Source information:
Source: RMDB library RNAMAK, as collected in RNAgym. Structure probing data (2A3) for a 207-nucleotide construct. The reactions ran in a buffer of 150 mM KOAc, 10 mM MgCl2 and 150 mM bicine (pH 8.5), at 24 C. For 2A3, 2,008 sequencing reads were counted.
RNA sequence: GGGAACGACUCGAGUAGAGUCGAAAACGCUGGGAUCGUAAAACGCGAGGAUCUCGGACUACUCCCCACCACACUGAAGCGCGCACGGUGUGAGGUAGUCCGAGGGAGCGUGAUGAAGAUCCUGUGCUGAAGCGCGCACGGCAACCGAAAGGUGCGAUCCUUUCUGGUGCUUCGGCACCAGAAAGGAAAAAGAAACAACAACAACAAC
Reactivity to 2A3 in 0.01 (KOAc 150mM, MgCl2 10mM, bicine 150mM(pH8.5), 24C), signal-to-noise 1, nucleotides 027 to 156: c020g000c030u040g010g000g010a020u010c020g000u070a010a000a010a010c000g000c010g020a170g020g010a020u000c010u010c020g010g010a000c000u000a000c050u190c040c090c030c070a020c020c020a010c000a000c020u040g020a160a050g040c000g000c010g010c000a020c030g000g000u000g020u000g020a230g110g000u000a000g010u010c000c000g010a000g000g010g020a010g000c010g020u010g010a060u300g010a010a020g000a010u000c000c000u000g010u000g000c000u060g000a100a040g000c000g030c000g010c010a000c000g010g000c000a020a030c000c000g050a100a040a010g000g000u030g020c050g060a130